[RMDB]
RNA sequence: GGGAACGACUCGAGUAGAGUCGAAAAGAAGCAGUCCUUAUUGUGUGUGAUGUUUAGUCAUCGCACUGUGCCUACGGGCUGCCAACGUAGGACCAAUGUGCCGAGAGGCACUAGAAGUACGGCUUAUUAUGAUGCAUCGCCGUACCAACGAUGCUGACAUCCACUAUUAUUUCGAUAAUAGUGGAUGAAAAGAAACAACAACAACAAC
Reactivity to DMS in 0.01 (KOAc 150mM, MgCl2 10mM, bicine 150mM(pH8.5), 24C), signal-to-noise 4, nucleotides 027 to 156: g000a100a070g030c010a030g000u000c010c000u000u000a090u010u010g030u010g040u000g020u010g020a030u000g030u000u010u000a240g010u000c010a030u000c000g000c000a030c010u000g010u010g040c060c040u010a090c120g010g010g010c030u000g030c060c040a060a060c040g010u000a030g010g000a300c050c050a080a150u010g030u000g020c010c000g000a300g000a300g000g010c000a010c010u000a060g000a070a230g020u000a020c030g020g020c060u000u000a140u010u010a100u000g010a150u000g000c030a030u010c030g000c000c010g010u010a070c130c010a050a020c000g010a040u000g000c010u000g020a230
Reactivity to 2A3 in 0.01 (KOAc 150mM, MgCl2 10mM, bicine 150mM(pH8.5), 24C), signal-to-noise 7, nucleotides 027 to 156: g120a040a000g000c000a010g010u050c010c020u080u110a200u230u220g110u040g000u010g020u010g030a020u010g120u080u190u220a270g120u180c000a000u000c000g000c000a000c010u030g050u080g110c010c030u030a040c050g010g010g000c030u020g020c010c010a050a020c030g060u070a020g010g040a020c020c020a070a070u110g010u010g000c000c000g030a070g010a030g050g000c000a000c000u010a000g030a050a010g010u000a000c000g010g000c000u040u030a080u150u090a130u300g190a040u130g020c030a020u040c040g000c020c020g050u010a020c000c000a060a030c030g020a010u060g000c010u020g010a010